[RMDB]
RNA sequence: GGGAACGACUCGAGUAGAGUCGAAAAUCGUUCCUUUCGCUCGUAAAGCGGCUCCUGUAGCUGCCUAAAAACCUCUAGCAGGUUUGAGCGGUCUAUAGCUUGACUCCGUUAAAGGCUACAGACAAACCCUCAACGGAUGCUCUAGUAAGGUUUCUCUGCAUCUAGUAAGGUUCGCCUUACUAGAUGCAAAAGAAACAACAACAACAAC
Reactivity to 2A3 in 0.01 (KOAc 150mM, MgCl2 10mM, bicine 150mM(pH8.5), 24C), signal-to-noise 2, nucleotides 027 to 156: u020c000g000u010u000c020c000u040u050u120c000g000c000u000c020g060u140a090a000a020g010c000g000g010c010u040c020c300u200g100u200a010g000c010u040g000c020c000u140a170a140a000a000a000c060c040u110c100u160a130g060c150a030g170g010u000u020u080g000a000g040c010g020g000u010c020u030a110u080a080g010c000u000u030g000a000c000u000c000c010g030u010u090a150a010a000g010g020c020u110a040c040a030g090a040c050a040a120a090c090c110c020u090c070a000a000c020g040g050a050u070g000c030u000c010u060a080g020u060a140a100g130g000u040u000u000c000u000c010u000
Structure probing data (2A3) for a 207-nucleotide construct.
The reactions ran in a buffer of 150 mM KOAc, 10 mM MgCl2 and 150 mM bicine (pH 8.5), at 24 C.
For 2A3 the reverse transcriptase was SuperScript II with manganese.